[RMDB]
RNA sequence: GGGAACGACUCGAGUAGAGUCGAAAAGCCGUGCUCGAGAGGGAGCAGAAAAUGCAGAGGUAUCCCGUCGUUUCGCUAAACAAAUGCGAAACGACAAAUUGCGUUACAUACGCAAUCCUCUAAUGAAGCCUGAUCUACAAUUCGUUGUAGAUCAGGCAAAAGAAACAACAACAACAAC
Reactivity to DMS in 0.01 (KOAc 150mM, MgCl2 10mM, bicine 150mM(pH8.5), 24C), signal-to-noise 3, nucleotides 027 to 126: g010c050c090g000u010g040c040u000c050g000a120g030a090g020g020g000a020g030c020a060g000a050a130a120a070u000g020c160a040g000a050g020g000u000a060u000c020c030c000g030u000c000g020u000u000u000c010g000c000u010a030a100a140c300a100a100a040u010g000c000g010a000a010a000c000g000a010c010a020a060a020u010u000g000c010g010u010u000a130c300a060u020a030c020g020c000a000a020u000c000c000u000c000u000a140a110u000g000a150a110
Reactivity to 2A3 in 0.01 (KOAc 150mM, MgCl2 10mM, bicine 150mM(pH8.5), 24C), signal-to-noise 4, nucleotides 027 to 126: g030c000c010g130u050g000c010u010c010g210a210g050a040g150g140g010a010g040c010a010g100a010a130a010a010u200g030c090a000g010a020g080g020u060a040u060c010c010c000g010u010c010g000u000u000u010c010g000c040u040a120a220a160c060a040a100a040u090g000c000g010a000a010a000c000g000a010c000a010a040a000u020u000g000c000g020u020u080a140c050a150u260a030c030g000c000a000a040u040c000c000u000c010u040a070a160u140g040a080a010
Source: RMDB library M2PK90, as collected in RNAgym. An RNA of 177 nucleotides, treated with DMS and 2A3 and read out base by base. Conditions: 150 mM KOAc, 10 mM MgCl2 and 150 mM bicine (pH 8.5), 24 C. DMS adducts were read by reverse transcription with MarathonRT. High 2A3 reactivity points to a flexible backbone, as in loops and unpaired stretches. For 2A3 the reverse transcriptase was SuperScript II with manganese.